Notes: Structure probing data (2A3 and DMS) for a 207-nucleotide construct. The 2A3 profile rests on 6,788 reads. The reactions ran in a buffer of 150 mM KOAc, 10 mM MgCl2 and 150 mM bicine (pH 8.5), at 24 C. The DMS profile rests on 4,348 reads. For DMS the reverse transcriptase was MarathonRT.
RNA sequence: GGGAACGACUCGAGUAGAGUCGAAAAGCUUGGGUUCGCCCAAGCAAAAAAUCCUAAGUCAGGCAUCGAUCGUGUCACACGCAUCGAUCUAUCGGAAACGAUAGGGAGCGUGUGCACGGGAGCCUGAUAUGGAAAAAAAUGCGUUUUCGAACGCAAAGCUCUAUUAAGUAUUCGUACUUAAUAGAGCAAAAGAAACAACAACAACAAC
Reactivity to 2A3 in 0.01 (KOAc 150mM, MgCl2 10mM, bicine 150mM(pH8.5), 24C), signal-to-noise 6, nucleotides 027 to 156: g010c000u000u010g010g000g010u040u060c070g110c010c000c010a010a020g020c020a010a020a010a000a000a010u060c030c000u040a110a000g020u010c000a000g010g020c020a210u130c180g120a100u060c030g070u030g300u300c010a000c000a000c000g030c020a170u300c050g090a110u000c010u000a000u010c010g040g030a110a030a060c020g000a000u000a000g020g000g000a010g000c000g000u000g000u000g000c000a000c000g000g000g000a000g000c000c000u000g000a000u010a010u020g010g090a030a060a010a010a000a020a160u130g000c000g010u030u040u040u120c200g060a010a000c000g000c000a020a090a010
Reactivity to DMS in 0.01 (KOAc 150mM, MgCl2 10mM, bicine 150mM(pH8.5), 24C), signal-to-noise 2, nucleotides 027 to 156: g020c010u010u010g010g020g040u000u000c300g060c040c000c000a020a020g020c000a010a010a080a090a040a090u000c000c000u020a060a250g010u000c010a000g010g010c010a200u000c150g000a040u000c000g000u000g000u000c030a000c030a000c000g000c010a270u010c190g010a050u010c000u020a010u010c010g010g000a220a140a260c010g040a000u010a010g010g000g010a050g070c000g000u000g000u000g010c010a000c020g000g000g000a050g010c000c000u010g010a000u000a090u000g000g010a000a000a040a190a150a070a100u000g030c000g010u000u000u000u010c240g010a060a030c010g020c020a000a050a180